[RMDB]
Source information:
Structure probing data (DMS and 2A3) for a 177-nucleotide construct. The DMS profile rests on 970 reads. DMS adducts were read by reverse transcription with MarathonRT. Values cover nucleotides 27 to 126.
RNA sequence: GGGAACGACUCGAGUAGAGUCGAAAAGAUAUGGACUCUUCAGGAAUAACGAAGAACUGUCCUCGGAAACGAGGACAGGGAGUUACCUGAGAGAGUCCUAAGUCAAACCCGGUGUUCGCACCGGGAAUCUCACGUAAAUCUUCGGAUUUACGUGAGAAAAAGAAACAACAACAACAAC
Reactivity to DMS in 0.01 (KOAc 150mM, MgCl2 10mM, bicine 150mM(pH8.5), 24C), signal-to-noise 1, nucleotides 027 to 126: g030a000u000a210u010g000g000a010c000u000c010u000u000c010a030g000g030a300a210u000a020a050c130g000a140a220g060a220a190c010u010g020u010c000c000u000c000g040g000a070a030a090c010g070a030g000g000a000c000a000g000g010g040a040g000u000u000a100c010c010u010g030a070g010a060g010a000g020u010c000c000u000a010a040g000u000c010a110a080a250c010c000c010g060g010u000g040u000u010c300g040c010a010c000c010g010g010g000a030a010
Reactivity to 2A3 in 0.01 (KOAc 150mM, MgCl2 10mM, bicine 150mM(pH8.5), 24C), signal-to-noise 2, nucleotides 027 to 126: g000a010u040a020u070g000g030a000c020u000c020u000u050c010a000g020g100a300a300u230a300a000c160g300a300a030g000a020a000c020u000g000u000c000c030u010c000g030g000a020a000a010c020g000a000g000g000a000c000a000g000g010g000a020g010u090u070a240c020c010u010g010a170g040a040g000a010g100u020c000c000u000a010a000g000u000c000a050a020a180c000c000c000g000g000u030g000u050u120c300g050c140a020c030c020g000g000g030a000a050